RNA sequence: GGGAACGACUCGAGUAGAGUCGAAAAGCGAUAUUUGGGAUUGGAGCGAAUAAGUUGGCAAAAAGGAGUAAAGUUACAUAAUCUAGAAACUUCGGUACCGUGUAUAUCUACAACAACUGAGGCUAAAUCUAACGCAUAUCUUCGGAUAUGCGUUAGAAAAAGAAACAACAACAACAAC
Reactivity to DMS in 0.01 (KOAc 150mM, MgCl2 10mM, bicine 150mM(pH8.5), 24C), signal-to-noise 1, nucleotides 027 to 126: g030c090g010a080u000a050u010u000u010g000g010g010a140u030u000g020g010a060g040c040g010a060a060u000a080a080g010u020u010g010g020c050a050a020a120a090a030g000g000a060g020u000a040a060a090g010u000u020a090c080a080u050a080a080u000c060u000a050g000a110a100a080c010u000u000c010g000g000u000a000c060c100g070u000g030u040a060u010a040u000c060u000a050c050a050a030c140a030a050c050u000g030a060g000g010c080u000a040a090a140